[RMDB]
RNA sequence: GGGAACGACUCGAGUAGAGUCGAAAAGGAAAAUGUUAAGUAUGAAGUGGGAAUCUUCAUACAUGGUUCCACCAGCUCUGACACUCACGGUAACUAUUCUUCACAACUAGGAGCAUCACAGGCUGGGCGAUUUACCAUCACUCCCAACUCCCCAGCCCCCCAUGCUAAUGUUCGCAUUAGCAUGGGGAAAAGAAACAACAACAACAAC
Reactivity to 2A3 in 0.01 (KOAc 150mM, MgCl2 10mM, bicine 150mM(pH8.5), 24C), signal-to-noise 1, nucleotides 027 to 156: g020g010a040a000a010a030u190g050u190u090a140a010g010u000a010u000g010a000a000g000u090g060g010g000a000a050u010c000u030u020c020a030u000a000c040a000u040g040g020u050u050c030c010a000c020c000a000g000c000u010c040u080g050a010c050a010c050u070c030a090c100g110g000u070a070a030c080u020a140u210u060c000u130u100c110a080c030a260a120c070u070a100g040g040a000g020c010a020u090c040a050c010a010g030g020c050u000g000g000g010c110g010a070u060u080u180a060c070c010a050u110c030a000c050u000c000c000c020a000a020c030u050c040c010c000c000a010g040c020c020

This 207-nucleotide RNA was probed chemically with 2A3.
The 2A3 profile rests on 563 reads.
2A3 is a SHAPE reagent: it acylates the 2'-hydroxyl of flexible nucleotides of all four kinds.
Reactivities are given for positions 27 through 156.
2A3 adducts were read by reverse transcription with SuperScript II with manganese.